RNA sequence: GGGAACGACUCGAGUAGAGUCGAAAAGCACCGCCGCAGUGCAGCCAACCGCCUACCGCACACACGCUGCCCGAGCCUGCUGCUGUCGCAGUCUUACCCGGUCCGGGGCCGGACCCGGGUAGGCGUAGACUAAUACUAGCUUCGGCUAGUAUUAGUCAAAAGAAACAACAACAACAAC
Reactivity to 2A3 in 0.01 (KOAc 150mM, MgCl2 10mM, bicine 150mM(pH8.5), 24C), signal-to-noise 5, nucleotides 027 to 126: g020c010a010c050c020g110c030c020g010c060a020g010u040g060c020a010g060c020c020a040a040c040c030g010c010c020u050a070c010c040g040c020a010c010a010c000a000c110g010c040u060g020c000c010c020g040a020g020c010c010u030g000c020u010g010c010u060g050u120c070g000c050a030g020u010c010u050u050a030c000c000c000g000g010u000c010c010g060g010g250g070c150c010g020g010a030c070c170c020g010g000g000u000a000g000g000c010g030u040a030
Reactivity to DMS in 0.01 (KOAc 150mM, MgCl2 10mM, bicine 150mM(pH8.5), 24C), signal-to-noise 8, nucleotides 027 to 126: g010c030a090c040c060g010c040c050g020c040a120g020u000g010c050a100g010c050c060a090a120c080c050g010c030c030u000a090c070c030g010c050a070c080a090c090a070c080g010c030u000g010c030c020c020g010a090g010c040c040u000g010c030u000g010c020u000g010u010c100g010c080a090g000u000c010u000u010a020c000c000c000g010g010u000c000c000g010g020g020g030c170c030g010g000a020c060c040c040g000g000g010u000a000g010g010c110g010u000a110
Chemical mapping of a 177-nucleotide RNA with 2A3 and DMS. The RNA was probed in 150 mM KOAc, 10 mM MgCl2 and 150 mM bicine (pH 8.5) at 24 C. For DMS, 14,549 sequencing reads were counted. The 2A3 profile rests on 13,168 reads.